Description: An RNA of 177 nucleotides, treated with 2A3 and DMS and read out base by base. The reactions ran in a buffer of 150 mM KOAc, 10 mM MgCl2 and 150 mM bicine (pH 8.5), at 24 C. DMS adducts were read by reverse transcription with MarathonRT.
[RMDB]
RNA sequence: GGGAACGACUCGAGUAGAGUCGAAAAGCCACUUACGGACACUCCUUCUGACGGGCAGUCUCACUCGCAUGACCCAGUCAGGUCAUGACUGUGAGCGAGUUCGACUGAGGGUCAGUUCGAGUGUGGAGCUGUGCAGUGUAUUCGUACACUGCACAGCAAAAGAAACAACAACAACAAC
Reactivity to 2A3 in 0.01 (KOAc 150mM, MgCl2 10mM, bicine 150mM(pH8.5), 24C), signal-to-noise 3, nucleotides 027 to 126: g050c040c010a060c090u150u220a070c100g080g000a010c000a000c010u020c010c000u030u000c010u020g020a000c010g040g140g010c010a000g020u040c000u000c030a000c000u010c030g000c010a060u130g100a090c000c010c020a010g040u010c000a020g080g070u120c060a140u030g020a030c010u010g030u030g060a030g020c000g000a010g000u020u050c020g000a010c000u010g010a030g110g030g010u000c010a000g020u030u000c010g010a010g000u030g010u030g040g060a050
Reactivity to DMS in 0.01 (KOAc 150mM, MgCl2 10mM, bicine 150mM(pH8.5), 24C), signal-to-noise 2, nucleotides 027 to 126: g010c030c000a160c190u020u010a160c160g010g010a070c030a070c040u000c000c030u010u000c000u000g000a020c020g010g020g010c020a020g010u000c000u000c100a030c000u000c040g000c020a080u010g020a150c130c070c010a040g000u010c010a040g000g020u010c250a050u000g000a000c020u000g000u010g000a080g040c010g000a020g030u000u000c160g000a000c000u000g000a060g000g010g000u000c010a020g010u000u000c170g010a050g010u000g010u010g010g000a140